[RMDB]
RNA sequence: GGGAACGACUCGAGUAGAGUCGAAAAAGGUCAGUGGCCCAUUUGCAGACUGCGACAGCCAUCACAGACCAAGGUAUCGUGCCACGGCAUGUUCCACCUUGGCCAUUUGGUCACGGUCCAGAUAGUCGUCAUCUGACUCCUUCGGGGGUCAGAUGGCAAAAGAAACAACAACAACAAC
Reactivity to DMS in 0.01 (KOAc 150mM, MgCl2 10mM, bicine 150mM(pH8.5), 24C), signal-to-noise 7, nucleotides 027 to 126: a070g010g010u000c040a060g020u010g000g010c020c020c050a100u010u010u010g020c090a130g000a090c060u000g010c060g000a050c140a110g010c040c040a070u020c100a110c150a120g000a100c010c000a030a020g000g010u010a030u020c010g020u000g010c000c020a150c290g010g000c000a010u000g010u010u010c130c100a050c010c010u000u000g000g000c070c030a070u000u010u010g000g000u010c040a050c080g010g010u000c020c030a060g010a090u020a050g000u020c070
Reactivity to 2A3 in 0.01 (KOAc 150mM, MgCl2 10mM, bicine 150mM(pH8.5), 24C), signal-to-noise 7, nucleotides 027 to 126: a000g060g010u040c030a020g010u020g040g000c000c000c010a050u030u020u090g030c030a010g020a070c020u020g000c010g030a020c030a020g030c020c010a030u030c010a030c020a040g050a030c000c000a000a000g010g000u020a010u050c010g000u010g000c000c010a050c090g060g000c000a000u020g010u050u020c030c010a010c000c000u000u010g000g000c010c010a040u040u020u080g010g000u030c010a000c060g020g010u010c010c000a030g030a060u110a030g130u080c010